[RMDB]
RNA sequence: GGGAACGACUCGAGUAGAGUCGAAAAGGAAACGUCAGGACUGCGCAGUCCGGCAACAUCAGCAGAGAGCCCGCUAUACGUGACGGAUUGGCUGAAGCGUACAGAAAUAUUGAGCCUCCUGCAAGAGCAGAUAUUGGAUCUUCGGAUCCAAUAUCUGAAAAGAAACAACAACAACAAC
Reactivity to 2A3 in 0.01 (KOAc 150mM, MgCl2 10mM, bicine 150mM(pH8.5), 24C), signal-to-noise 1, nucleotides 027 to 126: g080g000a120a070a010c060g030u060c050a060g000g060a000c030u040g070c200g000c250a000g000u000c000c000g000g040c010a020a010c000a080u110c060a030g000c040a010g070a000g000a010g070c000c020c000g000c040u060a030u020a020c030g010u010g000a020c030g080g000a080u150u170g160g090c000u010g010a090a010g000c010g030u000a010c030a030g090a080a150a020u250a110u080u090g020a020g010c030c000u010c030c010u010g000c030a060a020g000a030g140
Reactivity to DMS in 0.01 (KOAc 150mM, MgCl2 10mM, bicine 150mM(pH8.5), 24C), signal-to-noise 2, nucleotides 027 to 126: g000g010a040a070a070c110g010u000c050a120g030g000a050c030u000g060c160g020c210a030g030u010c020c020g060g000c070a030a070c130a060u000c140a060g000c040a040g000a180g000a070g060c010c000c010g050c040u010a010u000a030c030g000u000g000a190c050g040g000a300u010u010g000g000c000u000g000a030a290g010c000g020u020a040c060a020g020a020a090a100u000a090u000u000g010a050g010c040c010u000c110c040u000g010c040a050a100g030a080g000
An RNA of 177 nucleotides, treated with 2A3 and DMS and read out base by base. For 2A3 the reverse transcriptase was SuperScript II with manganese. It was measured as part of the RMDB library RFMREP. As a SHAPE reagent, 2A3 marks flexible, mostly unpaired nucleotides at the ribose 2'-OH.